[RMDB]
RNA sequence: GGGAACGACUCGAGUAGAGUCGAAAACUAAGAUGCCGCCGGCGUUAUAACCUACAGCGGUGUUUUGAUCGCCAGUAGUUACGGCCUUUAAUGCACUACUACCUACGGCAGUAUUUCUACCUACCGUGGCGCCUUCUAAUGCGCGAUAGCCAACAGCUACGACGAUACUAUUCGUAGUAUCGUCGUAAAAAGAAACAACAACAACAAC
Reactivity to 2A3 in 0.01 (KOAc 150mM, MgCl2 10mM, bicine 150mM(pH8.5), 24C), signal-to-noise 3, nucleotides 027 to 156: c010u050a020a040g050a100u030g020c000c010g030c010c010g060g000c030g020u050u140a090u080a200a110c030c040u090a120c060a050g010c010g000g000u010g010u050u040u030u070g070a070u130c020g000c010c010a030g020u030a020g000u050u040a070c090g010g000c010c030u130u230u210a150a060u170g000c010a000c070u040a020c000u010a020c040c030u060a050c040g020g000c010a010g000u010a190u030u160u000c030u040a040c010c020u010a010c000c010g010u010g030g010c030g010c030c000u090u110c080u160a140a110u120g010c010g000c020g090a080u100a020g070c030c010a070a070c070a110g050c010
Reactivity to DMS in 0.01 (KOAc 150mM, MgCl2 10mM, bicine 150mM(pH8.5), 24C), signal-to-noise 1, nucleotides 027 to 156: c010u010a030a120g050a070u000g000c010c000g040c010c020g070g030c040g010u020u010a080u000a150a130c090c040u000a080c110a000g010c020g030g050u000g000u000u000u000u000g010a050u010c030g040c030c020a210g010u010a050g010u010u000a050c120g020g020c020c050u000u000u000a060a120u010g020c040a080c040u010a070c050u010a030c050c020u000a050c030g010g020c030a070g000u000a080u000u000u000c080u000a030c110c030u010a010c020c010g020u030g020g020c050g000c030c070u010u020c090u030a050a100u000g010c000g000c000g000a000u000a080g020c000c030a070a120c090a130g000c020
The record gives the reactivity of an RNA of 207 nucleotides to 2A3 and DMS. DMS adducts were read by reverse transcription with MarathonRT. 2A3 adducts were read by reverse transcription with SuperScript II with manganese. The 2A3 profile rests on 1,801 reads. The RNA was probed in 150 mM KOAc, 10 mM MgCl2 and 150 mM bicine (pH 8.5) at 24 C.